This 207-nucleotide RNA was probed chemically with DMS and 2A3. For 2A3, 3,657 sequencing reads were counted. The reactions ran in a buffer of 150 mM KOAc, 10 mM MgCl2 and 150 mM bicine (pH 8.5), at 24 C. For DMS, 5,438 sequencing reads were counted.
RNA sequence: GGGAACGACUCGAGUAGAGUCGAAAAAGGCUUUUCGAAGCCUAUGUCGAUAUGGAUGUCUACCCACCAAGAUGCAGCGUUGAAAUGCGAUCGGAAACGAUCGCAUGGAGCUGCUACCUUGAGGACAUCCUAAGUCUGAACUCUCCUUCGGGAGAAAAAGUGGCAAAUAAUUCGUUAUUUGCCACUUAAAAGAAACAACAACAACAAC
Reactivity to DMS in 0.01 (KOAc 150mM, MgCl2 10mM, bicine 150mM(pH8.5), 24C), signal-to-noise 2, nucleotides 027 to 156: a020g010g000c000u000u000u000u000c190g040a040a030g020c000c000u000a030u000g000u010c030g020a090u000a180u000g010g020a010u000g010u000c000u020a090c030c000c000a300c120c020a030a020g000a020u000g000c000a020g010c000g030u000u020g010a130a150a030u000g000c010g010a030u000c020g000g010a160a120a300c020g000a010u000c000g010c020a000u000g000g000a200g010c000u000g010c010u000a000c020c000u000u000g010a170g000g010a060c000a000u000c000c010u000a000a040g020u000c070u010g000a110a160c110u000c000u000c010c000u000u000c240g020g000g010a030g010a010a010a050
Reactivity to 2A3 in 0.01 (KOAc 150mM, MgCl2 10mM, bicine 150mM(pH8.5), 24C), signal-to-noise 4, nucleotides 027 to 156: a000g040g000c050u100u080u070u130c190g100a030a010g000c000c010u070a200u180g240u100c090g010a030u020a030u120g000g010a000u010g000u000c000u030a170c060c060c010a030c020c000a030a000g000a010u030g000c000a000g000c020g290u300u070g010a010a020a000u000g000c000g000a010u000c010g000g000a030a040a020c000g000a000u010c020g000c010a000u000g000g000a010g000c000u000g000c010u000a000c000c010u010u000g010a000g000g000a000c000a000u000c010c000u010a010a000g020u000c070u130g140a140a110c040u020c000u010c060c000u030u070c270g100g000g000a020g000a040a030a000
It was measured as part of the RMDB library RNAMAK.